[RMDB]
The record gives the reactivity of an RNA of 177 nucleotides to 2A3 and DMS. DMS adducts were read by reverse transcription with MarathonRT. High DMS reactivity at an A or C suggests that its Watson-Crick edge is free. The reactions ran in a buffer of 150 mM KOAc, 10 mM MgCl2 and 150 mM bicine (pH 8.5), at 24 C. It was measured as part of the RMDB library OK2TRN. For 2A3, 1,860 sequencing reads were counted.
RNA sequence: GGGAACGACUCGAGUAGAGUCGAAAAAGCCGUUCGUGGAGCCUCAGUAUGACAUCGAAGAGAUCUCGAAGUCCAAGCCAGUGUUUGUGACACCACUGAGUGAUCCAAAGCCUAUCCACGAUGGCAAAGCGUGAGAGAAUUUCGAUUCUCUCACGCUAAAAGAAACAACAACAACAAC
Reactivity to 2A3 in 0.01 (KOAc 150mM, MgCl2 10mM, bicine 150mM(pH8.5), 24C), signal-to-noise 2, nucleotides 027 to 126: a000g000c000c000g060u000u010c020g000u000g030g000a030g040c000c000u020c000a000g030u080a120u220g020a010c020a030u010c010g050a090a090g060a050g010a230u060c030u020c050g030a060a020g000u030c010c060a080a000g010c010c060a140g020u080g050u160u080u080g160u160g050a030c010a000c030c010a100c070u040g010a040g100u090g050a110u090c040c000a060a020a050g060c000c040u030a010u000c000c000a000c020g010a000u020g000g000c000a020a020
Reactivity to DMS in 0.01 (KOAc 150mM, MgCl2 10mM, bicine 150mM(pH8.5), 24C), signal-to-noise 2, nucleotides 027 to 126: a150g000c000c000g020u000u010c020g090u000g010g000a030g000c070c010u000c040a060g000u000a100u010g000a010c070a080u000c030g000a010a060g010a260g000a110u000c100u000c010g010a040a060g020u000c010c150a080a090g000c110c180a080g030u000g000u000u000u010g000u020g000a040c070a120c060c060a090c070u000g000a040g000u010g010a070u020c050c130a060a060a100g010c130c060u000a110u000c000c000a010c030g010a020u000g010g000c010a060a080